Source information
Structure probing data (2A3 and DMS) for a 177-nucleotide construct. Values cover nucleotides 27 to 126. The reactions ran in a buffer of 150 mM KOAc, 10 mM MgCl2 and 150 mM bicine (pH 8.5), at 24 C. DMS adducts were read by reverse transcription with MarathonRT. The 2A3 profile rests on 1,010 reads. 2A3 adducts were read by reverse transcription with SuperScript II with manganese.
[RMDB]
RNA sequence: GGGAACGACUCGAGUAGAGUCGAAAAUGGCACCCGACGCCUCGGGAUAGGCCGGGCGGGAGCUGCCAGCCCGUCCAAGCGUCGAAGCCCCCGGAGAUCCGUAAUGGAGAGAAGGGGGUGAAGGCGUGACAAAGGCUUCGUUCGCGAAGCCUUUGUCAAAAGAAACAACAACAACAAC
Reactivity to 2A3 in 0.01 (KOAc 150mM, MgCl2 10mM, bicine 150mM(pH8.5), 24C), signal-to-noise 2, nucleotides 027 to 126: u020g010g010c010a000c000c000c030g000a020c050g020c030c050u180c050g040g020g010a050u120a140g090g120c000c000g030g020g000c000g030g000g010a030g010c120u130g050c000c000a000g040c000c000c000g010u000c000c000a050a000g010c020g000u020c020g020a000a020g000c000c000c040c000c000g000g000a080g000a000u000c000c000g060u260a140a280u300g000g000a030g010a010g000a000a060g010g010g010g030g000u000g030a000a000g000g000c020g000u000
Reactivity to DMS in 0.01 (KOAc 150mM, MgCl2 10mM, bicine 150mM(pH8.5), 24C), signal-to-noise 1, nucleotides 027 to 126: u090g000g030c000a000c000c000c000g010a300c000g000c110c000u180c090g000g050g060a160u030a130g000g000c000c130g000g000g000c000g000g000g000a090g000c190u000g080c030c000a230g000c000c040c000g040u000c250c030a110a140g000c000g060u000c000g030a150a220g000c000c000c000c000c020g020g030a260g000a150u000c000c000g000u000a150a120u190g030g000a110g000a000g000a300a080g000g000g000g000g000u000g000a070a180g000g000c000g000u000